[RMDB]
RNA sequence: GGGAACGACUCGAGUAGAGUCGAAAAUGCGAUAAACGGCACCUAUAAGGUGGUGCCGAACCAGCGUGACCUACCAACACGCAACGAGCAGUCUGGUAUGACUGCAAACCUAUGGUAAUCAAAAGAAACUUCUAAUCAGGUUCGCCUGAUUAGAAGUAAAAGAAACAACAACAACAAC
Reactivity to 2A3 in 0.01 (KOAc 150mM, MgCl2 10mM, bicine 150mM(pH8.5), 24C), signal-to-noise 5, nucleotides 027 to 126: u070g010c040g070a080u090a130a120a040c010g000g000c000a000c000c010u080a110u040a300a130g270g030u110g010g000u000g020c000c000g010a000a010c010c010a010g010c000g000u000g000a090c000c030u000a030c000c010a030a020c000a000c000g010c020a020a060c050g010a020g040c000a000g000u000c010u100g130g150u300a120u280g000a010c000u000g000c000a020a030a000c020c000u090a090u120g040g000u040a050a060u090c090a020a030a060a100g100a080a150
Reactivity to DMS in 0.01 (KOAc 150mM, MgCl2 10mM, bicine 150mM(pH8.5), 24C), signal-to-noise 4, nucleotides 027 to 126: u010g000c090g030a140u020a040a110a190c000g000g010c000a000c010c000u010a170u010a220a150g020g040u010g000g030u000g020c000c000g000a000a070c080c040a100g000c010g020u000g010a050c020c030u010a040c010c010a230a090c010a020c020g020c010a100a090c140g000a190g010c010a010g010u000c000u010g020g010u010a060u010g010a000c000u000g010c000a010a040a040c050c050u010a050u010g000g000u000a030a090u010c220a050a060a140a130g000a090a090
An RNA of 177 nucleotides, treated with 2A3 and DMS and read out base by base. Values cover nucleotides 27 to 126. 2A3 adducts were read by reverse transcription with SuperScript II with manganese. Conditions: 150 mM KOAc, 10 mM MgCl2 and 150 mM bicine (pH 8.5), 24 C. The 2A3 profile rests on 5,692 reads.